[RMDB]
RNA sequence: GGGAACGACUCGAGUAGAGUCGAAAAUGUGUUCUUGGUAAAAUACCAACUUCACCAAUAAUAGGGCGAACCGUUGUUAAAUCACGGCCAUCAAUACGAAUACCUGUUUUUAACACUGAUGUACGAACCUCUAGGUAUCCUUCGGGAUACCUAGAGGAAAAGAAACAACAACAACAAC
Reactivity to 2A3 in 0.01 (KOAc 150mM, MgCl2 10mM, bicine 150mM(pH8.5), 24C), signal-to-noise 1, nucleotides 027 to 126: u160g040u000g010u000u050c040u000u030g000g010u110a110a160a100a100u270a090c000c000a010a050c010u100u020c010a030c030c000a020a060u180a160a140u040a080g160g000g000c010g040a040a040c000c030g040u070u070g030u050u110a070a100a080u080c040a010c050g020g000c010c000a030u090c020a000a100u070a140c060g010a000a110u100a150c000c060u000g120u030u140u010u070u070a020a040c070a000c030u080g050a070u180g080u160a010c050g040a050a060
Reactivity to DMS in 0.01 (KOAc 150mM, MgCl2 10mM, bicine 150mM(pH8.5), 24C), signal-to-noise 1, nucleotides 027 to 126: u010g050u010g030u000u000c040u020u000g000g060u000a070a060a150a110u020a080c050c030a040a070c070u000u000c040a030c000c230a100a060u000a100a140u010a020g020g000g000c040g010a080a140c060c030g000u000u000g000u000u020a050a000a100u010c160a020c100g020g010c020c070a080u000c060a030a020u000a080c060g000a050a070u010a040c020c010u000g020u000u030u000u000u010a020a020c030a070c070u000g020a050u000g020u000a080c080g000a110a130